[RMDB]
RNA sequence: GGGAACGACUCGAGUAGAGUCGAAAAAACUAAUUGGAGAAUUGGUUUUCCUAUCUUUACAGUGGGAACCAGUCGAGGCCCGGAAGGGAGCAGACCUACCAUUGACAUUUGUCGCUUGUAGGGCUGCGGGGUGGAGGAGAGGUUGCAGAUCAUUUGGACCCUAUUUGUGGUUCGCCACAAAUAGGGUAAAAGAAACAACAACAACAAC
Reactivity to 2A3 in 0.01 (KOAc 150mM, MgCl2 10mM, bicine 150mM(pH8.5), 24C), signal-to-noise 1, nucleotides 027 to 156: a000a000c140u160a050a070u130u100g080g020a090g050a160a090u040u030g000g020u090u030u050u050c010c020u050a130u180c100u130u230u090a120c050a140g020u060g040g000g010a000a000c000c010a000g050u050c010g010a040g000g080c060c020c020g020g060a040a050g000g000g000a010g000c000a000g000a010c000c000u000a000c000c000a000u000u000g000a000c030a140u110u200u300g030u030c030g000c010u000u000g000u010a000g010g010g000c000u010g000c000g020g000g030g000u100g000g010a020g080g000a120g000a030g020g010u060u040g010c010a040g010a170u030c000a080u070u030u100g060g010
An RNA of 207 nucleotides, treated with 2A3 and read out base by base. The RNA was probed in 150 mM KOAc, 10 mM MgCl2 and 150 mM bicine (pH 8.5) at 24 C. Source: RMDB library ARCHII, as collected in RNAgym. The 2A3 profile rests on 419 reads.